[RMDB]
RNA sequence: GGGAACGACUCGAGUAGAGUCGAAAAACCAGGACGAGGAUGUGGCAUCAUAUUACUAGCCAUCGCACGAAAUUAAUAGGAUGGCACGUCCUCAUCUUAGAUGGAACAACCACGUCAUCUCACGGGUAGUCAGAAUUAUGUUCGCAUAAUUCUGACUAAAAGAAACAACAACAACAAC
Reactivity to 2A3 in 0.01 (KOAc 150mM, MgCl2 10mM, bicine 150mM(pH8.5), 24C), signal-to-noise 9, nucleotides 027 to 126: a000c020c010a030g020g010a010c030g000a000g000g000a000u000g010u000g020g100c000a010u000c000a000u020a010u030u030a040c070u050a040g080c040c050a180u110c070g050c030a080c110g110a090a080a060u060u020a010a010u030a010g010g010a000u000g040g120c000a000c000g000u000c000c000u000c000a010u000c000u020u050a050g010a050u090g050g030a090a080c040a050a040c060c020a100c050g040u030c020a080u020c020u020c030a030c050g060g020g030u020
Reactivity to DMS in 0.01 (KOAc 150mM, MgCl2 10mM, bicine 150mM(pH8.5), 24C), signal-to-noise 4, nucleotides 027 to 126: a130c010c010a040g000g010a020c050g000a020g010g020a020u000g000u010g000g000c000a020u000c020a030u010a020u000u000a020c110u010a090g000c080c090a100u010c220g010c160a170c140g000a080a090a050u030u000a000a030u000a020g000g000a010u000g010g000c000a010c000g000u000c000c000u000c010a010u000c000u010u010a030g010a040u010g000g020a060a030c120a080a140c100c050a060c130g020u000c030a040u000c020u000c080a090c100g000g010g000u000